[RMDB]
RNA sequence: GGGAACGACUCGAGUAGAGUCGAAAAGAAAAAUGCCUUACCGAUACUUGGUCGACAAUUUAAUAGUAUCUGAUUAAUUGAUGGAUAGUAUUAGUUGUGCGACCAGGAAAUGGUAUGAGCAUUUCAAUCGCCUCAACCCUUUCGAGGGUUGAGGCGAAAAAGAAACAACAACAACAAC
Reactivity to 2A3 in 0.01 (KOAc 150mM, MgCl2 10mM, bicine 150mM(pH8.5), 24C), signal-to-noise 1, nucleotides 027 to 126: g130a020a180a080a080a000u000g000c080c000u000u000a000c000c040g000a070u070a170c000u000u000g000g000u000c000g040a000c000a000a000u070u190u190a000a000u000a000g120u000a070u000c000u000g090a090u100u260a270a180u300u260g070a030u190g040g000a000u000a000g180u000a000u000u000a000g020u000u000g000u000g300c000g000a000c030c000a000g000g000a000a120a090u160g000g000u000a000u000g130a100g000c000a000u000u000u000c010a020a010

An RNA of 177 nucleotides, treated with 2A3 and read out base by base. Source: RMDB library RFM100, as collected in RNAgym. The reactions ran in a buffer of 150 mM KOAc, 10 mM MgCl2 and 150 mM bicine (pH 8.5), at 24 C.